[RMDB]
Conditions: 150 mM KOAc, 10 mM MgCl2 and 150 mM bicine (pH 8.5), 24 C. This 177-nucleotide RNA was probed chemically with 2A3. The 2A3 profile rests on 357 reads.

RNA sequence: GGGAACGACUCGAGUAGAGUCGAAAAUUUGCAGCAUCGCCCGGCUGCGGCAGGAGACUGGUGGUGCUACUCGUGAUCUUCGAGGACGAGGAAAGGGCUGAGGUGGGGUCCGUGGAGCUAGCCGGAGACGUGCCACGUGGUUCGCCACGUGGCACGUAAAAGAAACAACAACAACAAC
Reactivity to 2A3 in 0.01 (KOAc 150mM, MgCl2 10mM, bicine 150mM(pH8.5), 24C), signal-to-noise 1, nucleotides 027 to 126: u290u070u210g050c030a000g000c000a060u130c060g050c000c000c000g160g060c000u080g090c030g080g090c020a060g020g020a080g090a240c030u150g000g000u020g100g130u090g030c000u100a020c000u000c000g000u070g000a090u100c000u010u070c080g020a000g090g000a050c090g000a030g070g000a070a070a070g040g060g020c100u110g060a030g000g300u080g040g000g000g000u000c000c010g100u090g000g000a100g020c000u060a000g000c000c000g150g000a000g000